Chemical mapping of a 177-nucleotide RNA with DMS and 2A3. The data come from the RNA Mapping Database (RMDB), library OK1LIB. Values cover nucleotides 27 to 126. The reactions ran in a buffer of 150 mM KOAc, 10 mM MgCl2 and 150 mM bicine (pH 8.5), at 24 C. DMS adducts were read by reverse transcription with MarathonRT.
RNA sequence: GGGAACGACUCGAGUAGAGUCGAAAACCAUGCAUCGGUGACUCGAUCAACAGACCCAGGAUGGCGAGCUCCAGCAUCGAGUCACCUCCUUUUGUAUGGCUUUUGAAUGGCCGUUACGACGGUUCGACUAACGAAGGUAGUUCGCUACCUUCGUUAGAAAAGAAACAACAACAACAAC
Reactivity to DMS in 0.01 (KOAc 150mM, MgCl2 10mM, bicine 150mM(pH8.5), 24C), signal-to-noise 7, nucleotides 027 to 126: c000c010a030u020g020c040a030u010c160g000g020u010g010a010c000u000c010g010a010u010c060a110a120c260a080g000a130c060c010c020a150g010g030a120u020g000g020c110g000a100g010c080u000c060c100a120g020c140a050u010c000g010a000g000u000c010a010c010c000u020c100c040u010u020u000u010g020u000a000u000g000g000c140u010u000u010u010g010a100a080u030g000g010c000c010g000u000u000a080c140g030a030c030g000g010u000u030c040g040a300
Reactivity to 2A3 in 0.01 (KOAc 150mM, MgCl2 10mM, bicine 150mM(pH8.5), 24C), signal-to-noise 9, nucleotides 027 to 126: c000c000a010u010g020c010a040u050c060g000g000u010g000a000c000u000c000g010a010u030c030a040a120c010a070g120a170c020c030c020a050g160g080a210u210g070g050c100g060a070g020c050u030c030c030a040g020c050a010u000c000g000a000g000u000c000a000c000c000u060c000c000u090u180u040u030g010u010a010u010g040g000c050u080u090u070u110g200a190a130u160g040g000c000c020g010u020u060a080c270g020a010c010g030g000u150u300c030g040a030